[RMDB]
RNA sequence: GGGAACGACUCGAGUAGAGUCGAAAACAAAGCAAGGCACUGAAAAUGCCUAGAUGAGCCUCACAGCUCCAUAAACACACAGGUUUGGUCCUGGCCUUUCUAUUAAUUCUUAAUAAAAUUACACAUGCAAGUAUCCGCGCCCCGGUGAGAAUGCCCUCAAUUUACGGAAGUUCGCUUCCGUAAAUUGAAAAGAAACAACAACAACAAC
Reactivity to 2A3 in 0.01 (KOAc 150mM, MgCl2 10mM, bicine 150mM(pH8.5), 24C), signal-to-noise 2, nucleotides 027 to 156: c060a030a070a000g080c040a030a040g020g020c020a010c120u130g000a060a050a020a100u050g010c000c000u010a050g020a160u110g020a000g000c000c040u040c020a070c030a050g010c010u000c000c040a090u130a080a140a010c090a000c020a010c020a070g100g030u090u150u140g040g050u090c000c020u010g020g010c020c010u090u080u040c060u110a100u150u140a220a070u130u100c010u050u060a130a080u110a200a230a090a080u180u240a090c090a000c020a050u180g060c030a000a070g040u030a040u020c020c030g070c020g000c030c000c000c020g000g000u040g000a010g040a060a050u080g010c020c000c010u020